[RMDB]
This 207-nucleotide RNA was probed chemically with 2A3. The RNA was probed in 150 mM KOAc, 10 mM MgCl2 and 150 mM bicine (pH 8.5) at 24 C.

RNA sequence: GGGAACGACUCGAGUAGAGUCGAAAACUCAAUGUAGGGAAUAACAUUGAAUUGAUACAAAUACCUUUUUCGGUGUAGGGAAAAACACGGAAUUGAUACAAAUACCUUUCUCAAUGUAGGGAAUAACAAAACAGGCAUCGCUUCGGCGAUGCCUGAAGACGUGAAACUAGUUCGCUAGUUUCACGUCAAAAGAAACAACAACAACAAC
Reactivity to 2A3 in 0.01 (KOAc 150mM, MgCl2 10mM, bicine 150mM(pH8.5), 24C), signal-to-noise 3, nucleotides 027 to 156: c010u000c010a000a020u040g020u040a100g070g000g150a120a140u080a150a000c000a000u010u020g000a030a040u070u150g060a080u180a260c090a030a100a030u180a140c010c010u030u080u000u000u060c040g130g000u040g010u030a040g030g020g070a050a100a130a030a000c020a000c000g020g020a040a080u050u090g030a030u080a140c040a020a090a030u100a090c010c010u040u040u030c020u010c040a060a090u170g070u070a030g000g010g020a060a070u090a090a060c090a040a040a040a040c000a000g000g050c010a010u010c000g000c000u020u040c110g010g030c020g000a000u000g020c000c000u000g000a010a010